RNA sequence: GGGAACGACUCGAGUAGAGUCGAAAAUGGCAAUACGGUUGGACUAGAAGGUGAAUUCAGUUGAGAACAGGGAACCUAUCAUUUCUGCGAGUGUAAGCUGGGGCAUAGAACAAUGCCAGGCAUAAGGUAGGCACUUGGAUGAAUGGAUGAAUGAAUAUAACGAUGAGCAAUUCGUUGCUCAUCGUUAAAAAGAAACAACAACAACAAC
Reactivity to 2A3 in 0.01 (KOAc 150mM, MgCl2 10mM, bicine 150mM(pH8.5), 24C), signal-to-noise 2, nucleotides 027 to 156: u050g000g000c000a040a050u060a100c100g120g000u050u020g020g050a090c070u040a050g040a050a010g060g040u080g060a020a040u090u050c040a040g020u030u070g150a110g040a040a020c010a030g030g000g070a020a010c000c000u040a070u080c020a060u020u090u050c000u030g020c030g080a050g020u010g030u170a110a010g000c030u060g040g020g030g000c000a000u000a070g180a070a020c080a090a020u040g010c000c000a010g000g030c000a020u050a110a040g120g000u070a060g000g020c020a020c040u020u000g010g070a030u040g010a010a040u020g010g060a000u060g070a030a070u130g020a150a020u120a000
Reactivity to DMS in 0.01 (KOAc 150mM, MgCl2 10mM, bicine 150mM(pH8.5), 24C), signal-to-noise 2, nucleotides 027 to 156: u000g010g050c060a110a090u010a050c050g000g090u030u000g020g010a090c070u010a120g000a130a060g020g000u010g020a050a100u000u000c000a070g000u020u000g010a090g020a130a120c050a180g000g030g010a080a030c010c010u020a120u010c080a070u010u010u000c030u000g030c010g080a180g040u020g000u010a050a170g010c070u010g030g020g010g040c030a130u000a090g000a170a150c120a030a030u000g000c030c000a300g000g000c060a100u010a060a030g010g000u000a070g000g020c000a020c010u010u010g010g020a060u000g060a020a080u010g000g000a110u000g040a080a140u010g010a050a100u000a140
This 207-nucleotide RNA was probed chemically with 2A3 and DMS. Source: RMDB library OK3TST, as collected in RNAgym. The 2A3 profile rests on 836 reads. For 2A3 the reverse transcriptase was SuperScript II with manganese.